RNA sequence: GGGAACGACUCGAGUAGAGUCGAAAACGCAGAGGGUUCUGAUAACAAAGAACCUAGAUAGCCGCAUCGGUAUUAUAGGAUGUAGUCGGUGCGCCGGAAUGCCUGCAUCGUAAGCCUAUAAGUAAAUUUAAGUGUAAUCACUUCGGUGAUUACACAACAGCAUGUUUAGCUUCGGCUAAACAUGCUGAAAAGAAACAACAACAACAAC
Reactivity to 2A3 in 0.01 (KOAc 150mM, MgCl2 10mM, bicine 150mM(pH8.5), 24C), signal-to-noise 1, nucleotides 027 to 156: c050g000c020a000g020a090g040g000g010u000u000c020u010g040a090u150a300a050c040a010a110a000g000a000a000c000c000u000a040g060a060u050a010g050c040c020g000c040a050u050c090g130g000u080a010u070u070a050u140a100g110g000a230u070g040u050a030g060u060c030g020g000u010g000c010g010c000c010g020g080a110a000u100g030c000c010u050g000c030a020u020c000g040u060a000a060g020c000c010u040a030u000a100a010g020u080a020a070a230u130u170u190a220a010g000u000g000u000a000a000u010c000a020c020u020u060c200g070g000u010g000a000u010u020a010c000a000c000a000a010
Overview:
The record gives the reactivity of an RNA of 207 nucleotides to 2A3. The data come from the RNA Mapping Database (RMDB), library M2RFPK.